Record summary
An RNA of 177 nucleotides, treated with DMS and 2A3 and read out base by base. The RNA was probed in 150 mM KOAc, 10 mM MgCl2 and 150 mM bicine (pH 8.5) at 24 C.
RNA sequence: GGGAACGACUCGAGUAGAGUCGAAAAUAAUGAGUGAACUUUAUUCAUUACAACCAUAUACAUGUUGAGCUAUCUGGCGGAAAACAGAUGGCUCAUUAUUUCAAUAUUCUGCUAAGGACAGCCAGUGAAUUCGUUGAUGGUUCGCCAUCAACGAAUUAAAAGAAACAACAACAACAAC
Reactivity to DMS in 0.01 (KOAc 150mM, MgCl2 10mM, bicine 150mM(pH8.5), 24C), signal-to-noise 2, nucleotides 027 to 126: u020a000a020u000g020a020g030u000g020a060a210c240u040u020u000a060u000u000c020a010u000u010a060c070a150a180c020c070a050u030a080u030a100c240a050u010g020u020u010g000a000g000c000u000a000u000c000u000g000g000c170g030g010a050a080a140a040c020a000g000a000u000g000g000c020u000c020a000u000u050a030u000u000u000c260a110a110u050a080u000u000c000u000g000c020u040a100a150g000g000a040c140a030g000c070c050a040g010u020g000
Reactivity to 2A3 in 0.01 (KOAc 150mM, MgCl2 10mM, bicine 150mM(pH8.5), 24C), signal-to-noise 2, nucleotides 027 to 126: u040a000a000u000g000a000g050u010g030a020a000c050u070u300u240a140u070u030c000a000u010u000a080c040a000a060c000c010a040u070a050u030a180c210a030u130g030u060u020g040a000g000c000u000a000u000c000u000g010g100c110g120g040a050a060a050a050c000a000g000a000u000g000g000c000u030c000a000u000u000a010u000u030u000c010a000a000u000a090u080u120c040u000g000c050u090a030a030g100g000a110c000a020g000c070c030a090g000u080g070